Conditions: 150 mM KOAc, 10 mM MgCl2 and 150 mM bicine (pH 8.5), 24 C. Chemical mapping of a 177-nucleotide RNA with 2A3 and DMS. High 2A3 reactivity points to a flexible backbone, as in loops and unpaired stretches. DMS adducts were read by reverse transcription with MarathonRT. It was measured as part of the RMDB library OK2TST. For DMS, 1,395 sequencing reads were counted.
[RMDB]
RNA sequence: GGGAACGACUCGAGUAGAGUCGAAAAAAGCCAUUGGAUAACAUACCUGACUUAUAAUAUGCUUCCAGGACAAAUUAAUGAUCCAUCAGUUUCACUGGGAAUUGAAAACAGGCGAGAAAUACCGAUAUAAUAGUACGAGGUUCGCCUCGUACUAUUAAAAAGAAACAACAACAACAAC
Reactivity to 2A3 in 0.01 (KOAc 150mM, MgCl2 10mM, bicine 150mM(pH8.5), 24C), signal-to-noise 1, nucleotides 027 to 126: a000a080g070c020c000a060u020u030g000g020a010u000a170a000c000a020u100a140c000c020u010g080a090c030u210u020a040u180a300a240u250a020u190g030c040u010u020c060c000a000g020g010a060c060a010a150a060u140u170a060a080u110g000a020u030c010c000a040u020c020a010g000u000u070u000c160a110c250u130g050g000g000a020a030u000u050g000a030a020a020a020c020a090g000g000c000g000a060g090a070a060a010u110a040c040c000g000a090u090a010
Reactivity to DMS in 0.01 (KOAc 150mM, MgCl2 10mM, bicine 150mM(pH8.5), 24C), signal-to-noise 2, nucleotides 027 to 126: a110a070g000c000c000a060u010u010g000g020a060u010a100a090c060a090u000a100c040c030u010g020a100c080u000u000a060u000a060a170u020a170u000g000c080u000u000c060c050a070g040g010a070c110a020a080a080u020u010a060a120u000g010a080u000c050c020a120u000c040a030g020u000u000u010c060a090c120u000g000g010g010a050a040u000u000g010a070a050a080a070c190a030g010g000c010g020a110g020a110a040a100u010a130c040c040g000a080u010a090